[RMDB]
RNA sequence: GGGAACGACUCGAGUAGAGUCGAAAAUGCAAGUAGUGCUAUUGUUGGAAUCACCGUACCUAUUUAGGUUUACGCUCCAAGAUCGGUGGAUUGCAGCCCUAUCAAUAUCUAGGAGAACUGUGCUAUGAAAACGGUAUUGGCUUCGGCCAAUACCGAAUCAUUACUCACCCUUCGGGGUGAGUAAUGAAAAAGAAACAACAACAACAAC
Reactivity to 2A3 in 0.01 (KOAc 150mM, MgCl2 10mM, bicine 150mM(pH8.5), 24C), signal-to-noise 3, nucleotides 027 to 156: u090g010c050a050a060g050u070a030g090u090g070c060u030a060u050u110g060u040u040g020g030a060a090u070c010a000c040c010g050u050a040c010c000u100a220u190u170u270a020g000g000u010u060u060a030c020g020c040u020c020c020a040a030g050a040u060c050g000g020u020g080g040a100u020u040g010c000a010g030c010c010c010u030a070u060c070a020a040u040a000u180c000u050a030g000g020a040g020a030a030c030u040g050u040g050c060u100a060u230g130a060a040a030a030c000g010g010u000a020u000u000g000g000c020u040u040c220g070g000c000c000a000a000u000a000c010c000g000a000a000
Reactivity to DMS in 0.01 (KOAc 150mM, MgCl2 10mM, bicine 150mM(pH8.5), 24C), signal-to-noise 2, nucleotides 027 to 156: u000g000c060a060a080g010u010a070g020u000g000c050u000a040u000u020g000u010u000g030g000a140a080u000c010a040c020c000g010u010a060c000c000u000a230u010u010u000a070g020g000u000u000u000a080c070g020c060u000c020c010a110a070g000a030u000c040g020g020u000g020g010a140u020u000g000c040a040g030c040c020c020u010a100u020c050a070a120u010a080u000c040u000a100g000g010a130g000a050a070c070u000g020u000g010c060u000a090u010g000a070a100a100a200c020g020g010u000a020u000u000g010g000c010u000u020c300g050g060c020c000a030a010u000a010c000c010g010a000a010